[RMDB]
This 177-nucleotide RNA was probed chemically with 2A3 and DMS. Values cover nucleotides 27 to 126.
RNA sequence: GGGAACGACUCGAGUAGAGUCGAAAAAUGAUCGUACUGAAGUACCUCAGUUAGUGAACGCUAAUCAAUACUCACCCUGUGUAUCCAUUGUCCCAUCCACUGUGUGGGAAGACGGUGAUUAUUAUAGGAGAAACUGGUAUUUCGAUACCAGUUUCUCAAAAGAAACAACAACAACAAC
Reactivity to 2A3 in 0.01 (KOAc 150mM, MgCl2 10mM, bicine 150mM(pH8.5), 24C), signal-to-noise 6, nucleotides 027 to 126: a020u190g030a050u090c070g010u070a010c020u070g070a130a050g060u120a100c030c000u050c030a030g010u020u120a090g010u070g190a120a040c100g000c080u080a060a040u100c060a040a070u040a080c010u000c010a050c010c030c030u050g050u010g020u110a040u040c040c020a060u030u160g010u020c010c000c010a050u060c060c000a150c120u100g050u070g000u060g180g010g060a010a020g090a010c070g000g050u030g060a010u010u030a080u060u070a160u180a070g160
Reactivity to DMS in 0.01 (KOAc 150mM, MgCl2 10mM, bicine 150mM(pH8.5), 24C), signal-to-noise 3, nucleotides 027 to 126: a040u010g010a050u000c160g030u030a070c050u000g020a080a060g000u020a060c020c010u000c040a070g020u000u000a060g020u010g040a080a110c240g040c090u000a050a060u040c070a070a080u020a040c060u010c000a050c040c010c070u020g000u010g000u040a070u000c060c040a110u000u020g000u010c000c000c010a050u010c060c060a050c080u000g010u040g040u000g000g000g000a090a040g000a120c110g010g000u000g000a100u020u030a040u010u060a130u010a110g000